[RMDB]
RNA sequence: GGGAACGACUCGAGUAGAGUCGAAAAACUGCGCCAAUAGCUACGGCUAGUGGCGCAGAGGGAAACUCCCAGGCCCCGCUGUAGAGGGACCGUCAGCGGCCGGGCCAGAAAGAAUGAGGUCCCCAAAAGAAGUGGAUACUCUUCGGAGUAUCCACAACUAAUAGAAGAACUUCGGUUCUUCUAUUAGAAAAGAAACAACAACAACAAC
Reactivity to 2A3 in 0.01 (KOAc 150mM, MgCl2 10mM, bicine 150mM(pH8.5), 24C), signal-to-noise 1, nucleotides 027 to 156: a000c010u000g020c000g010c000c000a010a050u000a000g000c000u000a040c240g080g010c000u000a000g030u000g000g000c000g030c000a000g000a000g010g080g060a080a100a100c020u010c020c000c000a000g020g020c010c010c010c010g000c010u010g000u080a040g050a160g080g020g000a000c000c010g000u010c000a020g000c000g150g010c160c240g080g010g000c020c010a050g120a040a050a000g090a070a150u230g050a080g030g000u000c000c000c000c000a020a090a020a000g120a140a010g000u000g000g000a000u010a000c000u000c000u070u100c270g020g000a030g010u000a000u000c000c000a000c000a000a000